[RMDB]
This 177-nucleotide RNA was probed chemically with 2A3 and DMS. The reactions ran in a buffer of 150 mM KOAc, 10 mM MgCl2 and 150 mM bicine (pH 8.5), at 24 C. The data come from the RNA Mapping Database (RMDB), library OK2TRN.
RNA sequence: GGGAACGACUCGAGUAGAGUCGAAAACGUGCGUACUGGGCCGCCGGCACAAUGUUCAACCCAGCCGUCUCAGAGGACGCGGUUCGACAACGAUCAGCCAGCAGGUCAGCGGGGUCCUCCUAGCUAGAUACCCGAUAGGAUUCGUCCUAUCGGGUAUAAAAGAAACAACAACAACAAC
Reactivity to 2A3 in 0.01 (KOAc 150mM, MgCl2 10mM, bicine 150mM(pH8.5), 24C), signal-to-noise 2, nucleotides 027 to 126: c060g070u110g040c030g090u090a070c050u080g000g010g040c010c040g010c030c010g030g070c050a030c010a020a140u090g020u050u050c020a020a060c010c000c000a020g000c110c030g020u020c030u030c080a160g040a080g090g040a010c000g030c040g020g060u060u070c060g020a030c020a140a050c060g040a120u020c020a030g020c050c000a010g010c010a040g000g060u040c010a020g040c020g000g000g010g020u050c000c010u000c000c000u040a050g040c000u030a040g020
Reactivity to DMS in 0.01 (KOAc 150mM, MgCl2 10mM, bicine 150mM(pH8.5), 24C), signal-to-noise 4, nucleotides 027 to 126: c100g020u010g040c040g020u000a070c080u000g030g010g000c050c070g020c050c070g000g000c020a060c090a070a130u010g000u010u000c130a080a090c040c010c040a140g020c090c040g000u000c030u010c120a180g010a150g000g000a040c030g010c070g010g000u000u000c090g010a050c070a040a090c140g000a090u010c090a100g010c010c020a060g000c030a060g010g010u010c040a080g000c050g010g000g000g010u000c020c020u000c030c030u000a100g010c100u010a080g010